[RMDB]
RNA sequence: GGGAACGACUCGAGUAGAGUCGAAAAAAAAAGAUAUGGAGGUGGAUAUCCUUGGAUUUAUGGGUCACAGUAGUCGGAAACGACUAUCACAGCCCAUUGUCAGGAUUUCCACCUCCUAAGUCAAAAACCAUACACGUAAGUUCGCUUACGUGUAUGGAAAAGAAACAACAACAACAAC
Reactivity to DMS in 0.01 (KOAc 150mM, MgCl2 10mM, bicine 150mM(pH8.5), 24C), signal-to-noise 2, nucleotides 027 to 126: a090a030a070a140a140g010a040u020a300u030g000g010a060g000g050u000g000g000a030u000a010u000c000c000u000u000g020g000a030u000u000u000a020u010g000g010g010u000c010a200c300a250g000u000a010g000u000c000g030g020a190a050a250c010g020a010c010u000a000u000c040a220c300a270g010c010c000c000a020u000u000g000u000c000a000g000g000a020u000u000u000c000c000a020c000c000u010c010c000u000a010a060g030u030c020a050a050a080a150a140
Conditions: 150 mM KOAc, 10 mM MgCl2 and 150 mM bicine (pH 8.5), 24 C.
Structure probing data (DMS) for a 177-nucleotide construct.
The DMS profile rests on 1,372 reads.
Source: RMDB library TTRDES, as collected in RNAgym.